[RMDB]
RNA sequence: GGGAACGACUCGAGUAGAGUCGAAAAACGAGUGAGUUACGACUCACUCGACUUUUAAUGCUACCCAAAGGUCGUGACAAGACGAUAAAACGCAGAGUCAAAAAGUCCGACGUUACGACGUCGGACAACGAGCGAGUUCUGUUCGCAGAACUCGCAACGUCCAACAGUAGUUCGCUACUGUUGGACGAAAAGAAACAACAACAACAAC
Reactivity to 2A3 in 0.01 (KOAc 150mM, MgCl2 10mM, bicine 150mM(pH8.5), 24C), signal-to-noise 2, nucleotides 027 to 156: a000c050g040a010g000u000g000a000g010u010u060a000c240g000a010c060u000c000a000c000u000c000g000a000c010u050u030u060u150a150a130u070g020c020u070a110c000c000c000a060a030a030g120g000u010c010g030u020g040a090c060a130a060g030a010c010g010a110u030a130a090a000a000c040g000c060a040g020a020g160u080c120a090a080a000a020a000g000u020c000c000g000a020c000g000u020u050a060c260g000a000c000g000u000c000g030g030a000c000a000a010c030g030a010g000c010g000a000g000u000u000c000u000g030u050u110c240g010c060a010g000a000a000c000u020c000g000c000a000a000